[RMDB]
RNA sequence: GGGAACGACUCGAGUAGAGUCGAAAAAGAAGACAGGACACAGGAUUUUGUGCUCGGUUCUGCCAAUGUUGUCCAGAAUUAUAUAGAAGGGAAUGCAACCAUAACAAAAUCUGCGGCUUGUUAUAGCUCACUGUGAAGAAUUCGUUCUUCACAGUGAAAAAGAAACAACAACAACAAC
Reactivity to 2A3 in 0.01 (KOAc 150mM, MgCl2 10mM, bicine 150mM(pH8.5), 24C), signal-to-noise 2, nucleotides 027 to 126: a010g150a090a010g030a010c030a020g010g030a030c000a000c020a080g100g000a070u100u000u010u010g040u050g070c060u030c120g030g040u100u000c080u050g000c000c010a150a120u200g070u160u150g050u160c020c000a000g100a070a030u300u090a120u050a080u040a290g060a100a090g100g000g030a110a010u100g000c000a010a020c000c020a100u030a150a010c000a010a010a010a010u000c010u030g020c070g050g000c030u040u030g060u020u060a170u090a060g050c020
Reactivity to DMS in 0.01 (KOAc 150mM, MgCl2 10mM, bicine 150mM(pH8.5), 24C), signal-to-noise 3, nucleotides 027 to 126: a130g020a170a130g010a040c040a010g000g010a010c000a020c030a060g040g000a040u010u010u000u000g020u000g000c170u010c200g010g030u000u010c110u000g020c080c150a100a110u010g010u010u000g000u000c030c010a100g000a100a060u010u010a090u000a150u010a070g010a150a130g000g000g000a100a080u000g010c080a050a060c050c020a040u010a110a040c010a010a020a020a030u000c010u000g010c070g000g000c000u000u000g010u000u000a130u000a110g000c140

This 177-nucleotide RNA was probed chemically with 2A3 and DMS. High 2A3 reactivity points to a flexible backbone, as in loops and unpaired stretches. The reactions ran in a buffer of 150 mM KOAc, 10 mM MgCl2 and 150 mM bicine (pH 8.5), at 24 C.